[RMDB]
RNA sequence: GGGAACGACUCGAGUAGAGUCGAAAAAAGGUCACCAGGUAGAGAUAUGAAGAUUGUGGUUGCCCCUGGUAUUUCAAGAUGAUCCUUUGUUUGGGGCAGAAGGUUGAUGACUCAAUUUUCAGGCUCACCGAAGUGGGAAAUUCGUUUCCCACUUCGGAAAAGAAACAACAACAACAAC
Reactivity to DMS in 0.01 (KOAc 150mM, MgCl2 10mM, bicine 150mM(pH8.5), 24C), signal-to-noise 1, nucleotides 027 to 126: a040a020g010g020u000c020a040c070c040a110g000g010u000a060g010a060g000a090u000a080u010g000a060a060g030a030u000u010g010u030g020g000u010u010g010c030c020c010c000u000g060g000u000a050u010u010u010c080a060a090g020a120u000g000a060u010c010c020u000u000u010g040u000u000u010g020g000g000g050c010a070g000a090a070g010g020u000u010g010a090u020g010a130c120u010c000a020a050u000u010u000u000c010a060g000g010c010u000c050a060